RNA sequence: GGGAACGACUCGAGUAGAGUCGAAAACUCGAGACUUUCGAGUCUCGAGAGGGCCUCCUAAGUCUCGACGAAUUUGUCAGCUUAGUGUCGGAAACGACACGAGCUUGGAUUUAACUAUCGAGAUAUGGAAUUAACGUGUUAGGUUCGCCUAACACAACAUUAAAAACAAGUUCGCUUGUUUUUAAUGAAAAGAAACAACAACAACAAC
Reactivity to DMS in 0.01 (KOAc 150mM, MgCl2 10mM, bicine 150mM(pH8.5), 24C), signal-to-noise 3, nucleotides 027 to 156: c010u000c000g010a020g010a030c010u000u000u010c210g030a020g030u000c000u010c000g000a010g020a090g000g010g030c040c020u000c010c000u010a070a290g010u000c000u000c020g010a020c030g000a080a080u000u000u000g010u010c040a070g000c000u000u010a080g050u000g020u010c010g010g000a220a120a290c010g010a030c000a010c010g000a020g010c000u000u010g000g010a070u000u010u000a050a070c090u000a090u000c010g020a030g000a040u000a300u010g010g000a070a120u000u000a080a160c160g040u000g000u000u000a030g000g010u010u020c300g010c020c000u000a010a000c000a010c000a040a110
Reactivity to 2A3 in 0.01 (KOAc 150mM, MgCl2 10mM, bicine 150mM(pH8.5), 24C), signal-to-noise 7, nucleotides 027 to 156: c000u010c000g000a000g020a010c020u100u160u200c300g140a010g000u000c000u000c000g000a000g000a000g010g120g040c010c010u020c000c000u060a130a060g020u000c010u020c000g020a010c020g050a180a280u040u030u050g040u040c000a000g000c000u020u080a230g000u000g000u000c000g000g080a140a070a090c020g000a000c000a000c000g000a000g000c010u030u120g060g010a010u040u140u210a100a070c080u040a040u050c000g000a000g010a010u020a030u060g010g040a050a060u180u110a200a090c140g000u000g000u000u000a010g020g040u030u050c260g040c070c000u000a000a000c010a000c000a000a000